[RMDB]
Chemical mapping of a 207-nucleotide RNA with 2A3. The RNA was probed in 150 mM KOAc, 10 mM MgCl2 and 150 mM bicine (pH 8.5) at 24 C.
RNA sequence: GGGAACGACUCGAGUAGAGUCGAAAAUGCAGAGACUCAAUGGAAGCUGUUCUAACGAAUCGAGGUGUAAUUACGUUGUGUUGGUAAUGAAACUCCCUCUAAAUUAUUAAAUUAGAGAAAGAAGGACUUUAUACAUCUAAUACACACGUAUAGAUCCGUUUACCUCUUGGUUCGCCAAGAGGUAAACAAAAGAAACAACAACAACAAC
Reactivity to 2A3 in 0.01 (KOAc 150mM, MgCl2 10mM, bicine 150mM(pH8.5), 24C), signal-to-noise 1, nucleotides 027 to 156: u140g000c010a000g030a000g030a180c040u060c160a020a020u050g090g010a050a070g030c040u020g020u120u010c140u170a210a120c020g000a040a040u050c050g010a040g030g060u020g000u100a110a040u140u040a010c040g030u090u050g000u040g000u040u010g000g030u030a080a000u040g100a030a020a020c030u080c000c090c000u030c000u010a080a190a110u100u100a080u110u270a100a100a000u030u030a000g000a000g000a070a110a000g060a000a050g000g030a000c010u140u170u040a050u000a050c050a040u050c030u090a000a090u100a040c060a000c030a000c060g030u000a040u000a140g030a040u000c000c040